[RMDB]
RNA sequence: GGGAACGACUCGAGUAGAGUCGAAAAGGGAGACGGGGAUCCCGGGCUUACCCACGGGAACUGCUGGGUUCCCCUGAUGUCCAGUCCCUCCCCGUUCCUGGAGAAGGGAGACUCGGGAACGCCUAGCCGCCCACACUGUUCGCAGUGUGGAAAAGAAACAACAACAACAAC
Reactivity to DMS in 0.01 (KOAc 150mM, MgCl2 10mM, bicine 150mM(pH8.5), 24C), signal-to-noise 9, nucleotides 027 to 129: g050g010g010a050g020a120c270g010g000g010g010a030u040c040c030c070g000g000g010c110u030u060a190c020c040c020a150c250g010g000g000a060a080c100u050g030c060u000g010g020g000u020u020c020c010c010c010u040g030a100u000g000u060c000c000a070g020u010c000c010c000u010c000c000c000c000g000u010u010c020c020u040g050g020a070g040a110a080g040g030g010a040g020a080c020u010c040g010g000g000a000a000c110g030c060c030u000a070g030c060c060g040c090
Reactivity to 2A3 in 0.01 (KOAc 150mM, MgCl2 10mM, bicine 150mM(pH8.5), 24C), signal-to-noise 9, nucleotides 027 to 129: g020g010g000a050g010a020c050g000g000g000g010a010u040c010c010c010g030g030g010c040u070u160a160c000c010c020a040c090g030g000g010a050a040c060u100g040c020u050g070g000g000u010u020c010c000c010c000u040g060a090u150g080u030c020c000a010g040u010c000c000c000u020c000c000c000c000g000u010u010c010c010u040g130g020a050g020a080a090g080g030g010a060g030a010c000u000c010g000g000g020a020a020c020g010c000c000u030a040g030c010c020g040c010